[RMDB]
Conditions: 150 mM KOAc, 10 mM MgCl2 and 150 mM bicine (pH 8.5), 24 C. The record gives the reactivity of an RNA of 177 nucleotides to 2A3 and DMS. Values are in units of 0.01, from 0 to 300, in steps of 10. The 2A3 profile rests on 1,643 reads.
RNA sequence: GGGAACGACUCGAGUAGAGUCGAAAAUCUUUAUUUGCUGACUCGUCUCUUUAGUUUCAUGCCGCAUACUAUUCCAGAGGAGAGUCAAGAAAUGGGUAUGAUUGCCAGCUACAACGCUGGAGGCGGGAGGGUAGUCAGUAUUCGUACUGACUACCCUAAAAGAAACAACAACAACAAC
Reactivity to 2A3 in 0.01 (KOAc 150mM, MgCl2 10mM, bicine 150mM(pH8.5), 24C), signal-to-noise 3, nucleotides 027 to 126: u040c030u000u180u090a110u110u210u150g110c050u030g040a020c010u030c020g080u010c080u000c000u040u070u070a070g030u010u010u040c050a040u100g060c070c030g080c050a050u010a070c010u030a040u120u050c080c090a040g030a030g090g030a030g010a010g000u040c040a040a070g040a060a100a010u040g000g000g040u050a090u120g070a060u060u100g030c000c000a000g000c000u090a190c100a270a060c090g000c020u020g000g010a000g020g010c170g000g000g020
Reactivity to DMS in 0.01 (KOAc 150mM, MgCl2 10mM, bicine 150mM(pH8.5), 24C), signal-to-noise 2, nucleotides 027 to 126: u000c020u040u000u030a100u010u020u000g010c050u000g000a050c020u000c000g040u000c030u000c010u010u010u000a060g020u050u000u010c130a110u020g000c060c140g000c110a070u000a030c050u010a010u060u030c140c160a080g030a050g000g000a000g000a020g000u000c010a040a070g030a040a060a030u000g000g010g000u000a030u020g010a120u000u020g020c000c040a000g000c000u010a130c230a130a120c170g010c000u000g010g000a030g040g010c190g000g000g010